[RMDB]
RNA sequence: GGGAACGACUCGAGUAGAGUCGAAAACAUGUCGAUGGGUUGCUCGAUUGGAAUCGGCAUUCAAUCGUUGGAGGCACUCGAGGAUCUUCAUAACAUUGGAUACCUUCAUCGUGACGUCAAACCCGGAUCAUACUGCCCAGUUCGCUGGGCAGUAUGAAAAAGAAACAACAACAACAAC
Reactivity to DMS in 0.01 (KOAc 150mM, MgCl2 10mM, bicine 150mM(pH8.5), 24C), signal-to-noise 3, nucleotides 027 to 126: c070a060u020g000u000c110g030a150u010g000g000g010u020u000g010c030u010c010g010a050u000u000g010g020a060a060u000c130g020g010c040a070u020u000c020a010a030u000c080g010u000u010g020g000a060g000g000c260a070c060u020c150g020a130g010g000a060u000c040u000u000c050a060u000a090a060c150a050u000u000g000g000a040u000a020c010c000u000u010c020a040u000c050g010u000g030a090c110g000u000c070a070a040a090c020c000c010g000g000a160
Reactivity to 2A3 in 0.01 (KOAc 150mM, MgCl2 10mM, bicine 150mM(pH8.5), 24C), signal-to-noise 2, nucleotides 027 to 126: c030a030u180g060u180c040g040a060u130g020g000g040u050u030g020c020u010c030g060a030u050u190g090g070a120a110u120c060g040g000c020a000u050u060c010a030a020u030c060g050u040u020g020g010a000g000g030c030a020c080u050c110g060a150g010g060a120u000c000u020u030c030a090u050a170a030c020a040u040u070g030g000a010u080a110c000c000u050u050c000a030u030c020g050u040g050a090c050g080u060c060a040a030a050c000c030c010g010g010a020